[RMDB]
RNA sequence: GGGAACGACUCGAGUAGAGUCGAAAAGAUAUGGAAUACGUAUGGGAGAGCGCAAAUUCGGAAACGAACUCGUACGCUCGAAGAACAUACUGUAUUCCUAAGUCAAACGUCCGGUUCGCCGGACGAACAUGAUAACGUCGUUCGCGACGUUAUCAUGAAAAGAAACAACAACAACAAC
Reactivity to DMS in 0.01 (KOAc 150mM, MgCl2 10mM, bicine 150mM(pH8.5), 24C), signal-to-noise 3, nucleotides 027 to 126: g000a030u000a300u010g010g000a040a000u010a010c010g030u000a000u000g000g010g030a090g000a010g030c010g040c010a050a100a210u000u000c000g000g000a080a040a170c010g010a000a020c090u010c280g000u020a100c030g030c000u000c000g020a100a120g010a090a100c010a010u000a010c000u010g050u000a030u000u000c000c020u000a010a090g000u000c020a070a120a240c040g000u000c000c010g020g040u010u010c270g010c020c010g000g000a000c000g000a030a090
Reactivity to 2A3 in 0.01 (KOAc 150mM, MgCl2 10mM, bicine 150mM(pH8.5), 24C), signal-to-noise 3, nucleotides 027 to 126: g000a010u020a020u090g000g010a010a010u010a000c020g000u020a010u020g030g040g040a250g020a010g020c030g000c040a050a060a070u050u010c010g000g000a010a020a020c010g010a020a010c020u030c170g110u250a070c000g020c000u000c000g010a140a080g040a020a000c000a000u020a040c090u130g000u000a000u000u000c000c000u000a020a000g010u000c030a150a070a070c040g000u000c000c050g000g070u100u070c300g020c060c020g010g000a000c000g000a010a010